This 177-nucleotide RNA was probed chemically with DMS and 2A3.

RNA sequence: GGGAACGACUCGAGUAGAGUCGAAAAGAUAUGGAACGUGUAGAGCAACAGCUAACGGGAUCGGAAACGAUCUUUAGACAUGCUUGAGGCGUUCCUAAGUCAAAACAUAUGUGUUCGCACAUAUGAAGCUAGUUGAAUGGUUCGCCAUUCAACUAGCAAAAGAAACAACAACAACAAC
Reactivity to DMS in 0.01 (KOAc 150mM, MgCl2 10mM, bicine 150mM(pH8.5), 24C), signal-to-noise 2, nucleotides 027 to 126: g000a030u000a140u010g010g000a070a030c020g030u020g020u020a190g000a070g000c020a100a230c300a140g020c010u020a080a030c300g000g000g020a070u000c090g020g000a080a110a170c040g020a000u010c000u000u000u010a120g000a010c100a130u030g020c000u000u020g010a180g000g010c000g010u000u000c010c000u010a080a160g030u010c170a110a090a170a180c040a010u000a010u000g040u020g010u000u010c250g020c030a020c000a010u010a000u000g010a100a130
Reactivity to 2A3 in 0.01 (KOAc 150mM, MgCl2 10mM, bicine 150mM(pH8.5), 24C), signal-to-noise 2, nucleotides 027 to 126: g010a010u090a090u180g080g020a130a010c040g120u180g110u300a050g030a010g120c070a050a270c090a180g080c040u060a080a040c150g110g040g090a080u080c030g000g100a120a070a010c050g010a000u000c000u010u030u000a030g030a040c010a060u210g010c000u050u020g010a050g180g000c030g030u000u010c000c000u000a000a000g010u020c090a040a000a140a130c030a010u010a000u030g030u010g050u000u080c300g050c140a000c010a010u010a000u020g050a030a000
2A3 adducts were read by reverse transcription with SuperScript II with manganese. For DMS, 1,116 sequencing reads were counted.